[RMDB]
RNA sequence: GGGAACGACUCGAGUAGAGUCGAAAACUGACGCGUCGCCAGACCUCCGAGAUCCGGCAGGCCGACGCCACCGGCCGCUCGCGCACGAUCCAGGUCGAGGUGCGCAAGAAGCGCGUUUUCGUCAAGACCCGCUCAUAAUGUUCGCAUUAUGAGCGGGAAAAGAAACAACAACAACAAC
Reactivity to DMS in 0.01 (KOAc 150mM, MgCl2 10mM, bicine 150mM(pH8.5), 24C), signal-to-noise 1, nucleotides 027 to 126: c070u020g010a080c040g030c070g000u030c020g030c030c020a300g010a010c010c010u000c110c190g000a140g020a040u010c010c080g040g000c030a080g010g010c000c000g030a130c070g000c050c060a020c070c000g000g020c020c020g030c130u010c130g020c050g000c050a100c100g000a050u000c040c050a030g020g010u000c030g000a050g010g030u000g000c000g000c070a050a040g000a140a150g000c020g000c040g000u000u000u030u020c070g000u000c120a110a160g010a250
Reactivity to 2A3 in 0.01 (KOAc 150mM, MgCl2 10mM, bicine 150mM(pH8.5), 24C), signal-to-noise 1, nucleotides 027 to 126: c020u030g070a010c030g000c000g080u240c040g000c020c000a040g020a100c030c000u090c070c080g160a170g010a170u060c030c000g020g010c030a070g040g050c030c040g050a040c050g060c000c000a050c010c000g000g000c010c010g050c040u110c050g090c020g020c020a040c050g000a010u000c020c020a040g000g050u080c020g020a150g020g050u040g010c030g020c020a000a000g040a030a000g000c020g020c070g010u000u000u000u140c050g010u050c010a030a110g030a080
Record summary
The record gives the reactivity of an RNA of 177 nucleotides to DMS and 2A3. It was measured as part of the RMDB library OK2TST. The reactions ran in a buffer of 150 mM KOAc, 10 mM MgCl2 and 150 mM bicine (pH 8.5), at 24 C. For 2A3 the reverse transcriptase was SuperScript II with manganese. The DMS profile rests on 810 reads. In probing experiments dimethyl sulfate is read out at A N1 and C N3, which are open when not base-paired.